[RMDB]
RNA sequence: GGGAACGACUCGAGUAGAGUCGAAAAUACGUGACCUUCGGGUCACGUAACCGGCGUUCCCAAGUCAAAAAGAGAGACGCAAUCUCGACAGCCGCCUUUUCGUAUGAGUUGCUUUCGAGCAACUCAACAGAAUAGAGCAUUUCGAUGCUCUAUUCUGAAAAGAAACAACAACAACAAC
Reactivity to 2A3 in 0.01 (KOAc 150mM, MgCl2 10mM, bicine 150mM(pH8.5), 24C), signal-to-noise 5, nucleotides 027 to 126: u030a000c010g000u010g000a010c000c000u020u040c270g050g000g000u010c000a000c000g000u000a000a000c030c040g050g010c010g010u020u000c000c010c000a010a010g120u080c050a030a020a070a180a020g070a000g010a010g020a050c080g020c150a050a090u010c020u010c030g040a060c020a020g050c010c020g060c010c020u080u100u060u110c070g040u120a130u150g010a000g010u000u010g000c000u060u050u160c210g070a010g000c000a000a000c000u000c000a000a000
Reactivity to DMS in 0.01 (KOAc 150mM, MgCl2 10mM, bicine 150mM(pH8.5), 24C), signal-to-noise 6, nucleotides 027 to 126: u000a000c000g030u000g000a010c000c010u000u020c220g050g020g010u000c000a000c000g010u000a010a080c070c030g010g000c030g000u000u000c010c000c010a150a120g010u020c130a040a040a060a090a070g000a110g000a030g000a080c110g010c180a080a130u000c010u000c020g010a070c070a090g010c040c030g010c100c030u000u000u010u000c050g000u000a130u000g000a010g010u000u000g000c000u000u000u010c150g010a010g010c000a000a000c000u000c000a020a120
Structure probing data (2A3 and DMS) for a 177-nucleotide construct. Values cover nucleotides 27 to 126. For DMS the reverse transcriptase was MarathonRT. The RNA was probed in 150 mM KOAc, 10 mM MgCl2 and 150 mM bicine (pH 8.5) at 24 C.